Structure probing data (2A3 and DMS) for a 177-nucleotide construct. For DMS the reverse transcriptase was MarathonRT. It was measured as part of the RMDB library OK2TST. The RNA was probed in 150 mM KOAc, 10 mM MgCl2 and 150 mM bicine (pH 8.5) at 24 C.
RNA sequence: GGGAACGACUCGAGUAGAGUCGAAAAUCACAAGCAGGGAUUCGUAAGGCGUGGACGUUUCCCACGCACCGGCUUCUUCUCCGGUUCCGCGCAGGUCACUGACCAGCUGAAUGGUACGCCCCGCGCCCCUCAUUGACUUUUUCGAAAGUCAAUGAGGAAAAGAAACAACAACAACAAC
Reactivity to 2A3 in 0.01 (KOAc 150mM, MgCl2 10mM, bicine 150mM(pH8.5), 24C), signal-to-noise 3, nucleotides 027 to 126: u080c010a020c030a080a040g020c050a070g010g000g030a010u000u060c020g020u040a100a040g030g000c010g000u010g000g010a010c020g000u000u010u000c000c000c020a010c030g000c010a020c020c020g030g030c010u180u030c010u200u050c020u030c010c020g060g000u050u040c040c040g000c010g010c070a040g010g000u060c090a110c300u230g020a020c000c000a010g000c030u050g110a130a050u120g050g040u060a030c080g050c020c000c000c030g000c010g010c010c000
Reactivity to DMS in 0.01 (KOAc 150mM, MgCl2 10mM, bicine 150mM(pH8.5), 24C), signal-to-noise 4, nucleotides 027 to 126: u000c110a100c150a090a080g000c040a070g010g010g000a060u000u000c060g010u020a080a110g010g010c010g030u000g000g010a080c050g000u000u000u010c010c000c000a070c100g020c060a060c050c030g010g000c290u000u000c140u010u010c060u000c000c020g010g020u000u000c050c050g000c030g010c070a080g010g010u000c050a110c160u010g000a030c010c010a080g010c030u020g010a090a080u010g000g000u010a070c170g000c080c030c030c030g020c030g000c040c060